[RMDB]
Annotation
Chemical mapping of a 207-nucleotide RNA with 2A3.

RNA sequence: GGGAACGACUCGAGUAGAGUCGAAAAACAGAAAAAAGGAGUUUAAAUUAGAUUUGCAAACGGACGGUACUAAAUACCGUCACUUUUACGUCUAACUUGUCGUUAACUCUGCAAAAAGAAAACAAGAAAAACAAGCGUGAGUUCGCUCACGCUUGAACUUUGAGCUAACGUUCGCGUUAGCUCAAAGAAAAGAAACAACAACAACAAC
Reactivity to 2A3 in 0.01 (KOAc 150mM, MgCl2 10mM, bicine 150mM(pH8.5), 24C), signal-to-noise 1, nucleotides 027 to 156: a000c030a030g140a040a090a010a000a040a020g070g000a060g000u070u080u090a090a060a030u030u020a000g000a030u030u060u290g030c080a000a000a120c090g000g020a000c000g000g000u060a050c040u260a060a090a000u030a000c020c000g000u000c000a000c000u000u000u030u010a020c000g000u020c000u020a060a060c050u090u060g090u080c040g060u000u050a040a020c000u000c010u030g000c010a070a140a050a000a000g090a040a100a020a000c130a030a080g040a100a020a000a000a000c000a010a010g020c000g010u000g000a010g040u050u000c170g000c110u010c010a010c010g000c010u000u000g000a000a000

Description:
Values cover nucleotides 27 to 156. High 2A3 reactivity points to a flexible backbone, as in loops and unpaired stretches. The data come from the RNA Mapping Database (RMDB), library M2RFOK. The RNA was probed in 150 mM KOAc, 10 mM MgCl2 and 150 mM bicine (pH 8.5) at 24 C.